Notes: Structure probing data (2A3) for a 207-nucleotide construct. It was measured as part of the RMDB library RNAMAK. For 2A3 the reverse transcriptase was SuperScript II with manganese. The RNA was probed in 150 mM KOAc, 10 mM MgCl2 and 150 mM bicine (pH 8.5) at 24 C.
RNA sequence: GGGAACGACUCGAGUAGAGUCGAAAAGGGCAAUUCGUUGCCCAAUACGGGGUCCUUUGAUCAGCAGUGAAGCUUUGAUCUAUACUGAAGCCUCCACGGUAUAGGGAGCUUCCUGCUGGGAGGACGGAGGCACCCUUGCCGCUACUUUCGAGUAGAACUAGCCAUACGCCUUCGGGCGUAUGGCUAGAAAAGAAACAACAACAACAAC
Reactivity to 2A3 in 0.01 (KOAc 150mM, MgCl2 10mM, bicine 150mM(pH8.5), 24C), signal-to-noise 2, nucleotides 027 to 156: g000g000g010c010a000a020u100u070c240g080u100u020g000c030c000c040a000a010u190a080c090g000g000g090g010u010c030c050u260u250u010g000a000u010c000a000g000c000a010g030u070g300a000a000g010c000u300u200u010g000a000u000c000u010a000u000a000c020u010g070a270a060g020c010c000u000c000c000a020c000g010g000u000a000u000a010g000g000g000a000g000c000u000u000c000c000u000g000c010u000g000g000g000a000g000g000a000c000g010g000a000g000g010c000a000c010c000c000u000u100g070c040c070g020c050u010a000c000u050u200u140c210g090a030g010u040a020g010a070a090